[RMDB]
RNA sequence: GGGAACGACUCGAGUAGAGUCGAAAAGAUAUGGAACCACCAAUCAGGACAGCUUUUGACGUCGGGGAGGGUCGGAAACGACCUGAAAGACGACGAUAAGCUGUCCUGAUUGUUGGUUCCUAAGUCACUCAGGACAAUAGUUCGCUAUUGUCCUGAGAAAAGAAACAACAACAACAAC
Reactivity to DMS in 0.01 (KOAc 150mM, MgCl2 10mM, bicine 150mM(pH8.5), 24C), signal-to-noise 1, nucleotides 027 to 126: g010a070u000a300u000g000g010a020a010c000c000a000c060c000a010a000u010c000a070g020g020a010c000a000g040c000u000u000u000u000g030a090c000g020u000c010g000g000g000g000a300g000g000g020u000c000g010g000a050a070a290c000g000a030c000c000u000g010a100a110a170g040a080c010g010a100c010g000a070u010a000a000g000c000u000g000u000c000c020u000g000a000u000u000g010u000u000g020g010u000u010c000c000u000a010a070g000u000c060a200

This 177-nucleotide RNA was probed chemically with DMS. The DMS profile rests on 1,345 reads. For DMS the reverse transcriptase was MarathonRT. The RNA was probed in 150 mM KOAc, 10 mM MgCl2 and 150 mM bicine (pH 8.5) at 24 C. It was measured as part of the RMDB library TTRINS. Values cover nucleotides 27 to 126.